[RMDB]
RNA sequence: GGGAACGACUCGAGUAGAGUCGAAAAUGUCACUGAAUUGCAAAAUCCAUGAAUGGGCAGCUCCUGGAGUACUCUUGCUUCAUGGCGUCCCAGUGCUCAGAGUGCUACCUGACAUGUAGGGCCUGCUCAAUACUCCUUUGUCCAGUGAGUAAAUAUCUGACGAAUCUUAAUUCGUUAAGAUUCGUCAAAAAGAAACAACAACAACAAC
Reactivity to DMS in 0.01 (KOAc 150mM, MgCl2 10mM, bicine 150mM(pH8.5), 24C), signal-to-noise 2, nucleotides 027 to 156: u000g020u000c020a080c070u000g000a050a080u000u000g040c110a130a080a090a120u000c030c030a060u010g000a080a110u000g010g000g030c040a080g020c020u000c040c020u000g040g020a040g040u000a040c040u000c070u000u010g030c030u000u000c050a090u000g010g030c080g000u010c040c020c010a140g020u010g000c090u000c060a050g000a110g020u000g010c040u000a060c040c020u010g000a140c070a090u000g020u000a130g020g020g000c160c030u000g000c010u000c000a050a120u010a050c030u000c020c040u000u010u010g020u010c100c050a080g030u000g010a070g020u000a060a060a110u000a060u000c050
Reactivity to 2A3 in 0.01 (KOAc 150mM, MgCl2 10mM, bicine 150mM(pH8.5), 24C), signal-to-noise 4, nucleotides 027 to 156: u130g010u010c000a000c070u020g030a080a080u160u150g020c020a050a100a020a090u070c060c040a090u120g080a100a070u060g020g000g000c000a000g010c000u040c060c000u030g010g010a000g000u020a030c010u000c010u060u090g020c000u010u080c010a070u050g020g020c030g040u070c010c000c010a000g010u030g000c020u030c110a010g020a000g020u020g020c000u140a300c000c010u060g060a080c030a130u210g110u240a070g000g010g020c010c020u010g020c000u010c000a000a000u010a020c030u060c010c030u060u060u130g120u090c060c030a030g010u050g160a010g010u040a030a080a020u260a030u180c110